[RMDB]
RNA sequence: GGGAACGACUCGAGUAGAGUCGAAAACACGAAGUCGGCGGCGAUUUCGCCGGUGAAUCCUACCGGCUCGGCGAGGCGGUCGCCUCGGUGCACGCCACGCUGGCUGACAGCCUCGGAACCGCGCAGGGCUGUGCUGCGCAUUCGUGCGCAGCACAGCAAAAGAAACAACAACAACAAC
Reactivity to 2A3 in 0.01 (KOAc 150mM, MgCl2 10mM, bicine 150mM(pH8.5), 24C), signal-to-noise 1, nucleotides 027 to 126: c050a000c020g050a170a010g010u050c010g010g010c000g010g000c020g040a040u070u220u290c010g000c010c010g020g000u010g050a010a040u000c040c000u000a110c000c000g000g000c000u000c010g020g030c050g000a000g010g000c050g060g000u100c040g020c040c000u070c060g040g000u090g070c070a100c120g060c050c000a010c130g080c040u010g040g000c000u000g000a000c000a020g000c000c000u000c040g010g040a090a030c000c000g000c000g030c000a020g060g060
This 177-nucleotide RNA was probed chemically with 2A3. Conditions: 150 mM KOAc, 10 mM MgCl2 and 150 mM bicine (pH 8.5), 24 C. It was measured as part of the RMDB library OK1LIB. The 2A3 profile rests on 855 reads. As a SHAPE reagent, 2A3 marks flexible, mostly unpaired nucleotides at the ribose 2'-OH.